[RMDB]
RNA sequence: GGGAACGACUCGAGUAGAGUCGAAAAUUGUACACCUUCGGGUGUACAAGCUGUCUAGUCGCUAGCAAACGAUCAAAGCUAGCCACUAGACUUUAUUGAUCGCGACGUGCGCUUUCGAGCGCACGAAACCUCAUCAAACGUUCGCGUUUGAUGAGGUAAAAGAAACAACAACAACAAC
Reactivity to 2A3 in 0.01 (KOAc 150mM, MgCl2 10mM, bicine 150mM(pH8.5), 24C), signal-to-noise 1, nucleotides 027 to 126: u060u000g000u010a010c010a010c000c000u040u070c270g070g000g030u000g000u010a000c000a000a000g000c030u040g020u030c000u010a000g010u000c000g000c020u020a000g000c010a020a060a190c120g170a120u230c050a060a120a000g000c010u000a010g000c000c000a000c000u020a040g000a010c010u010u060u000a050u000u180g080a120u160c100g000c080g120a070c010g010u000g000c000g000c030u150u120u020c220g060a000g020c000g000c010a000c000g000a000a000
Reactivity to DMS in 0.01 (KOAc 150mM, MgCl2 10mM, bicine 150mM(pH8.5), 24C), signal-to-noise 2, nucleotides 027 to 126: u000u000g010u000a050c010a000c000c000u000u030c240g040g000g040u000g010u000a000c000a010a050g040c140u000g010u010c000u000a000g020u030c280g010c000u000a000g000c000a070a110a080c170g020a080u020c110a030a100a160g010c000u000a000g010c000c120a000c010u000a000g000a010c000u000u000u000a090u000u000g000a060u000c050g010c170g010a130c020g010u000g000c000g010c000u000u010u010c120g010a000g050c010g020c000a000c000g000a010a050

The record gives the reactivity of an RNA of 177 nucleotides to 2A3 and DMS. 2A3 adducts were read by reverse transcription with SuperScript II with manganese. It was measured as part of the RMDB library M2PK50.